[RMDB]
RNA sequence: GGGAACGACUCGAGUAGAGUCGAAAACCGGAUCUUUGACACGUAAAGUGAAGUUACUAUUUAGGGCUUCAUUUUAUUUCAAAGAAUUUGCUACCCGCACUUUCACUGCUACCACUGCUGUAGGUAGGUUGUAUGAAUGCUUCGGCAUUCAUACAACAAAAGAAACAACAACAACAAC
Reactivity to 2A3 in 0.01 (KOAc 150mM, MgCl2 10mM, bicine 150mM(pH8.5), 24C), signal-to-noise 2, nucleotides 027 to 126: c010c000g030g030a010u020c000u000u020u020g040a050c020a000c190g030u000a000a000a000g010u000g000a000a000g000u050u030a300c070u060a100u250u290u300a070g010g010g000c000u000u000c010a010u000u000u030u000a020u040u030u010c010a030a000a000g000a020a060u090u050u120g000c020u080a060c020c000c040g090c040a040c080u030u070u090c070a030c050u090g040c030u020a020c010c020a050c070u090g130c050u150g090u100a030g080g020u020a000g060
Reactivity to DMS in 0.01 (KOAc 150mM, MgCl2 10mM, bicine 150mM(pH8.5), 24C), signal-to-noise 1, nucleotides 027 to 126: c190c060g000g020a110u000c020u000u000u040g000a020c300a210c190g010u000a000a000a020g020u010g000a020a000g020u020u000a110c000u000a210u010u000u000a020g000g010g020c000u000u000c000a000u000u000u000u000a020u000u000u020c000a000a030a040g000a000a060u010u010u010g020c040u010a110c050c040c030g020c050a020c120u000u000u000c120a070c070u000g020c040u000a020c120c000a010c040u000g020c300u000g020u000a010g020g010u000a030g000
About this RNA
Conditions: 150 mM KOAc, 10 mM MgCl2 and 150 mM bicine (pH 8.5), 24 C. An RNA of 177 nucleotides, treated with 2A3 and DMS and read out base by base. For 2A3, 1,000 sequencing reads were counted.